[RMDB]
RNA sequence: GGGAACGACUCGAGUAGAGUCGAAAAGGCUCAUGGUCGACCCGUACAUCGCCGUGGUGGCGGGCGCGCUGACCGUCUGCAACAUCCCGCUGGCCUUCCUGGAGCCCACCAUCGCCAACUGGAUGGAAGAUACUCCAGUUUUCGAACUGGAGUAUCUAAAAGAAACAACAACAACAAC
Reactivity to 2A3 in 0.01 (KOAc 150mM, MgCl2 10mM, bicine 150mM(pH8.5), 24C), signal-to-noise 3, nucleotides 027 to 126: g030g010c010u000c050a060u140g010g000u020c030g030a170c010c010c000g000u060a120c010a060u040c030g030c120c090g190u190g040g030u030g040g000c010g000g030g000c100g000c010g010c060u070g010a020c030c010g030u030c050u070g000c030a070a050c000a130u020c000c010c000g000c030u020g030g000c010c000u060u030c010c020u060g040g030a040g020c020c000c010a020c020c010a050u070c040g050c040c030a070a070c080u080g040g010a020u030g020g040a040
Reactivity to DMS in 0.01 (KOAc 150mM, MgCl2 10mM, bicine 150mM(pH8.5), 24C), signal-to-noise 4, nucleotides 027 to 126: g000g010c020u000c040a090u000g010g020u000c010g000a150c020c010c010g010u000a070c080a050u010c050g020c090c110g030u010g000g040u000g000g010c010g020g000g000c090g020c150g010c080u010g000a060c060c020g020u000c040u000g020c060a080a110c080a090u010c020c000c040g000c060u000g000g010c020c060u010u000c040c010u000g010g000a110g000c000c020c030a120c020c020a030u000c080g020c040c060a050a090c080u000g010g000a050u010g010g010a150